Background:
Structure probing data (2A3 and DMS) for a 207-nucleotide construct. For DMS the reverse transcriptase was MarathonRT. The DMS profile rests on 3,418 reads. The RNA was probed in 150 mM KOAc, 10 mM MgCl2 and 150 mM bicine (pH 8.5) at 24 C. Reactivities are given for positions 27 through 156. The 2A3 profile rests on 6,240 reads.
[RMDB]
RNA sequence: GGGAACGACUCGAGUAGAGUCGAAAAUAGCGAAGUAGGAUUUUAUGCGUCAAGUGUUCACAGGCUGGGGAGUCGCCGUGAAACGAAAAGCAGAAAGCGUGCUGCUUACGAUAUAAUUUGCGCACCCAUAAGAAGUCUCUGUUCGCAGAGACUUCAAGAAUUGAACUACGUUCGCGUAGUUCAAUUCAAAAGAAACAACAACAACAAC
Reactivity to 2A3 in 0.01 (KOAc 150mM, MgCl2 10mM, bicine 150mM(pH8.5), 24C), signal-to-noise 5, nucleotides 027 to 156: u130a010g020c020g030a070a030g070u120a060g040g090a050u060u080u060u090a080u190g040c020g010u040c050a080a050g040u040g060u210u040c030a010c050a110g000g020c030u100g030g000g000g040a050g060u090c030g000c020c010g010u030g000a030a020a010c010g040a080a050a010a020g000c010a010g070a080a110a010g120c090g050u100g030c010u010g000c000u020u030a030c040g020a010u020a010u020a150a090u040u040u080g000c010g000c020a030c000c010c000a030u060a110a060g000a000a000g000u000c000u000c000u000g020u020u040c120g010c050a000g000a000g000a000c020u000u000c000a000a000
Reactivity to DMS in 0.01 (KOAc 150mM, MgCl2 10mM, bicine 150mM(pH8.5), 24C), signal-to-noise 2, nucleotides 027 to 156: u000a080g040c030g010a060a080g030u000a030g040g000a090u000u010u000u010a090u000g000c070g000u000c040a040a290g010u000g030u010u000c010a040c020a110g000g020c000u010g020g010g010g010a110g000u010c050g000c040c030g030u000g030a040a100a140c040g010a100a050a040a080g010c000a000g000a040a050a080g040c130g000u000g010c010u000g000c020u000u000a050c060g010a110u020a090u000a150a130u000u010u000g000c000g000c070a180c010c000c010a160u010a100a100g010a020a020g010u000c010u010c000u000g010u000u000c300g040c000a030g000a020g000a000c010u000u010c000a020a100